[RMDB]
RNA sequence: GGGAACGACUCGAGUAGAGUCGAAAAGGGCGUCAUUUCGAUGACGCCCAUACGUCUACUCCGAUUGGCGAGGACGACGCCCACGGGCGCGUUUGCCAAUCGCACCGUCCAGAUUCGUCUGGACGAACCCAUUUUAGGACUUCGGUCCUAAAAUGGGAAAAGAAACAACAACAACAAC
Reactivity to DMS in 0.01 (KOAc 150mM, MgCl2 10mM, bicine 150mM(pH8.5), 24C), signal-to-noise 1, nucleotides 027 to 126: g010g020g000c010g000u000c030a020u000u010u000c230g000a030u000g000a000c030g050c000c000c000a000u010a020c300g030u000c020u000a020c010u000c010c000g000a020u020u000g010g030c010g000a090g020g000a020c000g040a150c020g010c000c000c050a120c300g030g040g010c020g020c010g010u020u000u000g000c000c000a020a010u010c000g000c110a090c170c020g030u000c000c000a010g000a070u000u010c180g070u000c000u000g000g000a000c020g000a010a050
Reactivity to 2A3 in 0.01 (KOAc 150mM, MgCl2 10mM, bicine 150mM(pH8.5), 24C), signal-to-noise 2, nucleotides 027 to 126: g000g000g000c010g020u020c010a010u030u050u150c230g090a010u000g020a010c000g000c000c000c010a010u010a010c010g030u000c000u010a010c010u020c000c010g000a000u000u020g000g010c030g020a070g100g040a040c010g120a220c000g000c000c000c020a100c160g020g010g010c030g000c010g010u010u020u130g010c000c000a010a010u000c000g010c010a070c060c000g000u000c000c000a000g000a010u020u100c120g070u000c120u020g000g000a000c000g010a010a020
This 177-nucleotide RNA was probed chemically with DMS and 2A3. For DMS the reverse transcriptase was MarathonRT. The reactions ran in a buffer of 150 mM KOAc, 10 mM MgCl2 and 150 mM bicine (pH 8.5), at 24 C. High 2A3 reactivity points to a flexible backbone, as in loops and unpaired stretches. The 2A3 profile rests on 2,962 reads.